An RNA of 207 nucleotides, treated with 2A3 and read out base by base. For 2A3, 446 sequencing reads were counted. The data come from the RNA Mapping Database (RMDB), library OK3TST.

[RMDB]
RNA sequence: GGGAACGACUCGAGUAGAGUCGAAAAUUCAUUAUUGGCCAUCUCCUCGUAACGCACUUUUGGAGGAAGUACCACAUUUAUUCCUCUGCUACCUAAGGCAUUAGCAGGUAAUUUUGUUGAGCGGUAGGCUAUACCAACAACAUUCUCAUUGCUGUUCCAUUCUUCCCCACUUCGGUGGGGAAGAAUGAAAAGAAACAACAACAACAAC
Reactivity to 2A3 in 0.01 (KOAc 150mM, MgCl2 10mM, bicine 150mM(pH8.5), 24C), signal-to-noise 1, nucleotides 027 to 156: u070u010c020a080u030u150a040u070u070g020g000c010c000a030u000c070u080c020c000u010c040g110u150a200a000c050g070c070a110c060u200u070u160u300g140g000a000g000g000a030a070g020u060a010c000c060a100c010a110u050u070u150a050u060u190c000c000u000c010u000g000c020u020a020c000c010u100a070a050g000g030c000a060u090u000a020g000c060a020g030g030u050a050a200u030u000u040u060g020u000u020g050a070g030c090g010g020u030a040g040g090c020u180a080u000a080c010c020a050a000c000a000a030c000a040u110u110c040u070c030a060u140u050g030c020u050g000u010u000c000